[RMDB]
RNA sequence: GGGAACGACUCGAGUAGAGUCGAAAAGCCACCACGUUACGGAUAUCUGCAACUUCCGGGGUAGCGACAUCGCGAUCCCAGUUGAUGCCGAAGUAGUGUUUACCAUCGAUGUUAGCACCAGCAGCGAAGGCAAGAAUUAGUUCGCUAAUUCUUGCCUAAAAGAAACAACAACAACAAC
Reactivity to DMS in 0.01 (KOAc 150mM, MgCl2 10mM, bicine 150mM(pH8.5), 24C), signal-to-noise 4, nucleotides 027 to 126: g010c050c020a110c070c050a070c080g000u000u000a050c060g010g000a140u000a080u000c020u000g020c040a020a070c040u000u000c030c050g020g010g000g010u000a090g000c000g010a190c290a180u020c010g020c010g000a050u000c000c000c000a080g010u000u000g010a030u010g010c010c030g010a050a080g010u000a050g010u000g000u010u000u010a090c070c050a090u000c040g000a070u000g000u000u000a080g000c030a050c030c050a070g010c020a050g010c090g010a150
Reactivity to 2A3 in 0.01 (KOAc 150mM, MgCl2 10mM, bicine 150mM(pH8.5), 24C), signal-to-noise 3, nucleotides 027 to 126: g030c010c020a020c010c010a040c030g050u060u150a050c040g060g000a030u050a080u160c030u040g000c010a030a040c000u040u050c030c000g020g000g010g000u020a010g000c020g080a180c070a250u300c060g010c000g000a040u040c010c000c000a020g010u020u050g040a040u030g000c020c030g020a050a020g030u090a020g000u010g010u040u020u040a040c050c010a080u080c060g060a070u080g030u110u050a020g010c000a020c010c010a020g000c030a000g030c060g070a040
An RNA of 177 nucleotides, treated with DMS and 2A3 and read out base by base. Conditions: 150 mM KOAc, 10 mM MgCl2 and 150 mM bicine (pH 8.5), 24 C.